[RMDB]
RNA sequence: GGGAACGACUCGAGUAGAGUCGAAAACCACUCAUUGAGUGGCCACUUACUGAGUAUGAUUUUACUGAUUAUAAGGUACAACUCUUUGAGAAGUACUUUAAAUAUUGGGAUCAGACGUAUCACGCAAAGACUUCUGUCUUCGGACAGAAGAAAAGAAACAACAACAACAAC
Reactivity to 2A3 in 0.01 (KOAc 150mM, MgCl2 10mM, bicine 150mM(pH8.5), 24C), signal-to-noise 9, nucleotides 027 to 129: c000c000a010c010u010c020a300u110u290g010a000g010u010g030g050c020c010a090c030u110u170a050c030u040g020a020g060u080a060u080g070a110u040u070u080u190a080c020u020g010a010u000u030a040u010a070a010g010g000u000a010c010a050a080c030u000c000u070u190u300g020a020g000a040a010g000u000a000c000u020u020u030a020a110a040u190a040u040u050g040g000g010a010u010c010a010g030a060c050g060u090a060u180c070a030c110g080c070a070a070a040g100a080
Reactivity to DMS in 0.01 (KOAc 150mM, MgCl2 10mM, bicine 150mM(pH8.5), 24C), signal-to-noise 8, nucleotides 027 to 129: c010c020a000c020u030c030a190u030u080g030a060g050u000g000g000c060c070a080c030u000u000a000c110u000g020a090g020u040a080u040g000a030u040u040u080u070a110c030u030g010a000u030u040a130u030a020a010g040g000u020a010c000a040a230c020u000c000u040u060u160g000a060g000a050a250g010u030a030c030u000u000u000a010a090a090u100a030u030u030g000g000g000a000u020c020a060g040a050c120g000u020a060u010c080a070c140g000c130a040a090a050g030a200